The record gives the reactivity of an RNA of 177 nucleotides to DMS and 2A3. Reactivities are given for positions 27 through 126. Values are in units of 0.01, from 0 to 300, in steps of 10. The reactions ran in a buffer of 150 mM KOAc, 10 mM MgCl2 and 150 mM bicine (pH 8.5), at 24 C.
RNA sequence: GGGAACGACUCGAGUAGAGUCGAAAACAGAAGUUGGGUAAGCCAUGAAUGGGAAAUUUCCUCAUUCUUGGUUACACUAUAGUUCGAAAAGAAUUCCUGGCUUCUUGUUGCACAGCUGACUCAUGCCCAUGAUUUGCUUGUUCGCAAGCAAAUCAUGAAAAGAAACAACAACAACAAC
Reactivity to DMS in 0.01 (KOAc 150mM, MgCl2 10mM, bicine 150mM(pH8.5), 24C), signal-to-noise 3, nucleotides 027 to 126: c030a040g000a010a010g010u000u000g010g000g000u000a120a150g010c010c000a000u010g020a010a010u000g000g010g010a050a250a180u000u000u000c100c000u000c010a010u000u000c000u000u000g000g010u000u000a220c130a090c140u000a090u010a040g020u000u000c010g010a100a050a090a150g010a030a060u000u000c000c000u000g000g000c000u010u000c020u000u020g020u000u000g010c130a100c140a080g010c070u020g010a090c090u020c040a110u010g010c060c100
Reactivity to 2A3 in 0.01 (KOAc 150mM, MgCl2 10mM, bicine 150mM(pH8.5), 24C), signal-to-noise 2, nucleotides 027 to 126: c010a000g020a010a020g000u020u010g010g000g030u020a020a020g000c010c000a010u020g030a000a000u000g000g010g110a070a230a300u180u250u140c020c010u050c000a000u010u000c000u000u000g000g000u000u020a020c040a000c020u080a010u160a210g030u050u020c030g040a010a130a010a300g010a000a050u060u010c000c000u000g010g000c000u000u000c000u000u140g010u010u070g010c100a080c050a090g010c040u080g040a070c030u050c030a040u130g040c000c010
The DMS profile rests on 2,201 reads. Source: RMDB library RFMREP, as collected in RNAgym. For 2A3, 2,270 sequencing reads were counted. 2A3 adducts were read by reverse transcription with SuperScript II with manganese.